RNA sequence: GGGAACGACUCGAGUAGAGUCGAAAAAUAGAGAUUGGAGUCAUACAACCCCAGAAACCAUCCCUUAUACCUUGAGUAUUGCUGAAUUCAGUUUAGCGUGCAUGCUCUUGGCUAUUCUCAUAGUGAUAAAAUCUGUAGUCCUUCGGGACUACAGAAAGAUACCUAAAGGGUUCGCCCUUUAGGUAUCAAAAGAAACAACAACAACAAC
Reactivity to DMS in 0.01 (KOAc 150mM, MgCl2 10mM, bicine 150mM(pH8.5), 24C), signal-to-noise 1, nucleotides 027 to 156: a060u000a060g040a050g010a140u010u000g000g010a060g010u010c040a210u010a090c080a060a080c000c000c000c010a170g010a100a090a100c030c060a080u000c000c000c000u020u000a190u000a020c040c000u000u000g010a050g020u000a020u000u010g030c010u010g000a020a090u000u000c160a200g010u000u000u000a020g030c070g050u010g010c060a120u000g010c040u000c000u000u000g020g000c040u000a060u010u010c040u010c000a090u000a120g000u000g000a160u000a050a070a120a120u010c000u010g000u000a020g000u000c010c000u000u000c300g040g050g000a000c000u000a000c000a020g010a010a020a030
Reactivity to 2A3 in 0.01 (KOAc 150mM, MgCl2 10mM, bicine 150mM(pH8.5), 24C), signal-to-noise 3, nucleotides 027 to 156: a000u110a010g020a000g010a010u040u060g000g020a030g030u090c040a030u090a290c050a110a090c020c020c000c000a020g110a060a030a010c030c030a090u070c000c010c040u110u120a060u030a080c000c010u000u000g020a000g010u010a040u160u160g000c010u040g060a140a140u190u140c050a100g120u050u050u120a070g020c070g000u080g070c020a010u020g010c000u010c000u000u020g010g010c010u050a050u120u030c080u010c060a110u080a080g110u050g090a040u150a130a130a040a090u050c000u000g000u000a000g000u010c000c000u000u090c130g030g000g010a000c010u000a000c000a000g000a000a000a000